Structure probing data (2A3 and DMS) for a 177-nucleotide construct. DMS adducts were read by reverse transcription with MarathonRT. 2A3 adducts were read by reverse transcription with SuperScript II with manganese. It was measured as part of the RMDB library TTRDEL.

[RMDB]
RNA sequence: GGGAACGACUCGAGUAGAGUCGAAAAGAUAUGGACGGAUGUGGAGCCUCAGGGUCGGAAACGACCCAAGGGCGAUGAAACCGCUCCGUCCUAAGUCAAAAGUAAUCAGCCUUCGGGCUGAUUACAACUUAUGGUUGUUGUUCGCAACAACCAUAAGAAAAGAAACAACAACAACAAC
Reactivity to 2A3 in 0.01 (KOAc 150mM, MgCl2 10mM, bicine 150mM(pH8.5), 24C), signal-to-noise 2, nucleotides 027 to 126: g000a000u030a010u090g010g000a000c000g020g000a070u300g070u020g000g050a100g040c000c040u080c130a110g000g030g000u010c000g000g040a050a030a030c000g000a020c010c020c010a000a030g000g000g010c000g000a010u070g040a020a040a000c000c000g010c010u000c010c010g010u000c000c000u010a030a010g010u010c020a090a020a040a080g000u000a000a000u010c000a010g000c020c010u080u130c300g090g000g000c000u000g010a000u000u000a000c000a000a010
Reactivity to DMS in 0.01 (KOAc 150mM, MgCl2 10mM, bicine 150mM(pH8.5), 24C), signal-to-noise 3, nucleotides 027 to 126: g020a040u000a200u020g000g000a010c010g000g000a050u020g050u000g000g000a140g000c000c000u020c160a300g040g010g030u000c010g000g020a030a050a090c000g000a000c000c000c010a010a050g000g030g020c010g010a090u000g010a100a100a190c010c000g000c010u000c000c010g000u010c000c020u000a000a010g000u000c020a080a090a130a140g000u000a000a000u000c010a010g010c000c000u000u000c260g020g010g020c010u000g000a000u000u000a000c000a060a120